[RMDB]
The data come from the RNA Mapping Database (RMDB), library OK3TST. Structure probing data (2A3) for a 207-nucleotide construct. Values are in units of 0.01, from 0 to 300, in steps of 10. The RNA was probed in 150 mM KOAc, 10 mM MgCl2 and 150 mM bicine (pH 8.5) at 24 C.

RNA sequence: GGGAACGACUCGAGUAGAGUCGAAAAGAGCUGUCAAAAGACAGCUCACGAUCCAAAAGGAUCGAAACGCAGGAAGCACUCAAGCCGGAAAAGAACCGCCUGCGCGUGUAAUCACAAAACCACAAAAGUGGAAGUGAUUAGACGAAGCUUGGUGCAACCAACGCAUCAUCUUCGGAUGAUGCGUUGGAAAAGAAACAACAACAACAAC
Reactivity to 2A3 in 0.01 (KOAc 150mM, MgCl2 10mM, bicine 150mM(pH8.5), 24C), signal-to-noise 1, nucleotides 027 to 156: g000a000g000c000u000g020u030c010a010a020a110a300g000a000c000a010g000c000u000c000a000c010g000a000u010c000c000a060a080a020a170g000g000a000u000c010g000a050a060a000c010g000c000a000g020g000a110a090g000c020a000c000u090c000a010a000g000c020c010g000g020a000a000a030a100g050a110a050c000c000g000c000c000u000g000c000g000c000g000u000g000u000a000a000u000c000a010c010a000a050a140a030c000c000a000c010a010a190a250a010g020u000g000g000a090a000g000u010g000a000u000u000a010g010a000c000g000a000a010g000c000u000u000g010g010u020g000c020a010a030